[RMDB]
RNA sequence: GGGAACGACUCGAGUAGAGUCGAAAAUGGUUGGGAGCAGUUUAGCUCAGCAAGAUCGAACUGGCAUUGUCACACACAUCUCAGCUCCUUGGGUUUUCCCUCUCCAUGAGCAGCAGCCACACAUUGCUGCUCCUCGGCAUUUCGAUGCCGAGGAGCAAAAAGAAACAACAACAACAAC
Reactivity to DMS in 0.01 (KOAc 150mM, MgCl2 10mM, bicine 150mM(pH8.5), 24C), signal-to-noise 1, nucleotides 027 to 126: u010g010g020u000u000g010g020g000a050g000c040a050g010u000u000u010a200g000c030u000c030a120g020c140a040a160g000a130u000c030g000a040a070c050u000g000g000c000a040u020u000g000u000c070a060c110a040c140a070c070a070u000c040u010c050a200g000c010u000c040c050u000u000g000g010g000u000u000u000u010c020c020c000u000c080u000c040c060a060u000g000a020g000c020a040g020c050a110g000c060c070a070c120a080c120a060u010u000g010c060

Structure probing data (DMS) for a 177-nucleotide construct. Conditions: 150 mM KOAc, 10 mM MgCl2 and 150 mM bicine (pH 8.5), 24 C. The data come from the RNA Mapping Database (RMDB), library OK2TST.